Chemical mapping of a 177-nucleotide RNA with 2A3. Values cover nucleotides 27 to 126. The reactions ran in a buffer of 150 mM KOAc, 10 mM MgCl2 and 150 mM bicine (pH 8.5), at 24 C. Source: RMDB library OK1LIB, as collected in RNAgym. For 2A3 the reverse transcriptase was SuperScript II with manganese.
RNA sequence: GGGAACGACUCGAGUAGAGUCGAAAACAUGACUUUUUUAGUCCAGUCAAUGGGGUUCAGUCUGGCACGUAUACAUUAGCUACUUCCAUUGCGUGCAAAUUACUUAGCGCCUCGCGGGGAUCCGCGGGGGUCCUCACGGUUUCGACCGUGAGGACCCAAAAGAAACAACAACAACAAC
Reactivity to 2A3 in 0.01 (KOAc 150mM, MgCl2 10mM, bicine 150mM(pH8.5), 24C), signal-to-noise 2, nucleotides 027 to 126: c010a180u110g000a030c010u000u030u030u100u180u300a040g010u000c000c110a050g030u060c010a040a140u040g000g000g070g000u000u020c020a000g060u000c020u080g010g000c010a000c050g030u030a050u120a140c120a190u150u100a000g010c030u020a040c040u140u000c010c000a110u040u130g000c010g030u020g000c000a000a010a200u190u070a030c110u000u040a020g050c020g110c030c000u000c000g000c000g000g060g000g050a080u020c000c000g000c000g000g010